Annotation
Conditions: 150 mM KOAc, 10 mM MgCl2 and 150 mM bicine (pH 8.5), 24 C. Structure probing data (DMS) for a 177-nucleotide construct. It was measured as part of the RMDB library TTRINS.
[RMDB]
RNA sequence: GGGAACGACUCGAGUAGAGUCGAAAAGAUAUGGAUUAGCGGGAGGUGUAGUUUCAAUGAUGGCGCAGACUUCGGAAACGAAGUCUGCGCUUGAGAAGACUACACCGAAGAACGCUAAUCCUAAGUCCAAUAUUAGCUGCUUCGGCAGCUAAUAUUGAAAAGAAACAACAACAACAAC
Reactivity to DMS in 0.01 (KOAc 150mM, MgCl2 10mM, bicine 150mM(pH8.5), 24C), signal-to-noise 1, nucleotides 027 to 126: g020a120u000a300u010g010g000a030u000u000a000g000c010g000g000g010a070g000g040u000g000u000a000g000u000u000u000c100a130a110u000g010a200u000g000g020c000g010c000a010g000a020c000u000u000c000g000g020a130a160a220c030g000a040a030g000u000c000u000g000c010g000c010u000u000g010a180g030a090a060g000a030c010u000a010c010a020c010c000g000a070a150g020a180a200c000g010c000u000a000a000u000c000c000u000a010a060g000u000c050